[RMDB]
Annotation: Structure probing data (2A3 and DMS) for a 177-nucleotide construct. Source: RMDB library M2PK50, as collected in RNAgym. For 2A3 the reverse transcriptase was SuperScript II with manganese. The RNA was probed in 150 mM KOAc, 10 mM MgCl2 and 150 mM bicine (pH 8.5) at 24 C. Reactivities are given for positions 27 through 126.
RNA sequence: GGGAACGACUCGAGUAGAGUCGAAAACACACAAGGUUCGCCUUGUGUGCAAGAAUACACGAAUACUACCGUAGAAGUAUUCAGGUCACAUAACUACGGAAAUGGCGUUCUGCUUCGGCAGAACGAAAUGCAUUAGAGCUUUCGAGCUCUAAUGCAUAAAAGAAACAACAACAACAAC
Reactivity to 2A3 in 0.01 (KOAc 150mM, MgCl2 10mM, bicine 150mM(pH8.5), 24C), signal-to-noise 4, nucleotides 027 to 126: c010a000c000a000c000a000a000g020g030u010u060c160g110c050c000u000u000g010u000g000u000g060c010a040a050g080a070a080u180a130c090a010c070g030a000a000u030a030c010u070a230c000c010g020u010a020g010a120a000g010u020a020u020u020c030a030g150g020u110c050a040c020a210u170a220a090c050u010a000c010g000g120a030a070a090u210g150g000c010g000u000u000c000u000g010c030u020u040c120g080g000c000a000g000a010a000c000g000a000a000
Reactivity to DMS in 0.01 (KOAc 150mM, MgCl2 10mM, bicine 150mM(pH8.5), 24C), signal-to-noise 2, nucleotides 027 to 126: c000a020c000a000c000a010a010g010g020u000u010c230g050c000c000u010u000g000u010g000u000g000c080a040a080g010a120a090u000a050c080a130c130g000a030a050u000a060c040u010a090c000c020g020u000a010g020a140a030g000u000a000u000u000c010a090g020g030u000c120a060c120a040u010a090a130c010u010a000c000g000g020a200a070a160u000g000g010c000g040u000u000c000u000g010c010u010u050c170g000g000c010a000g010a010a000c000g000a000a050